RNA sequence: GGGAACGACUCGAGUAGAGUCGAAAAUAACUAUGACCCUCUUAAGGUAGCGUAAUACCUUGCCGCUUAAUUGGCGGCUUGCAUGAACGGAUUAACGACUCCCCCACUGUCCCCGGCCGGAAGCCGGCAUCAGUAGGUGGUUCGCCACCUACUGAUGAAAAGAAACAACAACAACAAC
Reactivity to DMS in 0.01 (KOAc 150mM, MgCl2 10mM, bicine 150mM(pH8.5), 24C), signal-to-noise 2, nucleotides 027 to 126: u000a100a180c090u010a120u010g000a090c070c020c010u000c080u000u000a040a020g040g000u000a040g010c180g010u000a090a060u010a050c040c000u010u000g020c010c000g000c000u000u000a170a180u030u010g010g000c000g000g000c000u000u020g040c090a060u000g010a090a090c100g000g000a110u000u010a070a050c070g000a090c070u000c010c000c010c000c050a100c120u000g020u000c030c110c000c020g000g000c000c040g020g000a130a120g010c000c000g030g010
Reactivity to 2A3 in 0.01 (KOAc 150mM, MgCl2 10mM, bicine 150mM(pH8.5), 24C), signal-to-noise 1, nucleotides 027 to 126: u030a010a030c050u080a070u300g110a110c030c000c000u060c030u050u070a020a000g040g000u010a030g070c020g090u060a060a050u030a110c010c000u000u040g000c010c000g020c030u060u150a160a070u160u260g010g040c020g000g000c030u030u050g020c060a050u080g080a050a020c080g030g050a090u020u100a140a070c080g200a220c000u010c000c000c000c000c000a030c020u030g030u000c040c010c000c020g000g020c000c000g080g000a000a030g030c010c000g010g000
The record gives the reactivity of an RNA of 177 nucleotides to DMS and 2A3. Conditions: 150 mM KOAc, 10 mM MgCl2 and 150 mM bicine (pH 8.5), 24 C. For DMS, 1,373 sequencing reads were counted.